[RMDB]
Chemical mapping of a 177-nucleotide RNA with DMS and 2A3.
For 2A3 the reverse transcriptase was SuperScript II with manganese.
For DMS the reverse transcriptase was MarathonRT.
The reactions ran in a buffer of 150 mM KOAc, 10 mM MgCl2 and 150 mM bicine (pH 8.5), at 24 C.
Source: RMDB library OK1LIB, as collected in RNAgym.
RNA sequence: GGGAACGACUCGAGUAGAGUCGAAAAGCUCUGCGAGACAGAUCGAACAACAAAGAGAGAUCGAAAAUCUUAGAGGAGAGAACGAAUUUGUCGACUUCACUAGGACAUUGUCGAUCAGAGGUCCAAAGACGAUUGAUGGGUUCGCCUAUCGAUCGUCAAAAGAAACAACAACAACAAC
Reactivity to DMS in 0.01 (KOAc 150mM, MgCl2 10mM, bicine 150mM(pH8.5), 24C), signal-to-noise 9, nucleotides 027 to 126: g010c010u000c010u000g010c030g000a300g000a050c030a080g010a020u000c010g000a300a230c070a060a110c240a050a110a090g010a060g010a300g000a010u010c000g000a050a110a100a190u000c000u000u000a000g000a070g000g000a020g000a080g000a160a010c020g010a100a120u030u020u040g010u000c000g000a270c000u000u000c000a080c010u000a010g000g000a020c090a060u020u010g000u000c010g000a190u000c000a020g000a020g000g010u010c020c010a070a050a110
Reactivity to 2A3 in 0.01 (KOAc 150mM, MgCl2 10mM, bicine 150mM(pH8.5), 24C), signal-to-noise 9, nucleotides 027 to 126: g040c000u000c000u000g010c020g010a020g000a020c010a010g010a010u010c010g040a050a040c030a050a020c040a040a300a020g110a010g010a000g000a020u010c010g040a050a050a010a050u000c000u000u010a010g010a030g010g010a000g000a010g030a060a030c020g030a090a160u130u070u160g090u030c010g030a150c000u000u000c010a000c020u000a000g000g020a010c040a110u070u140g030u010c000g000a010u010c000a000g010a010g020g020u000c010c000a020a030a030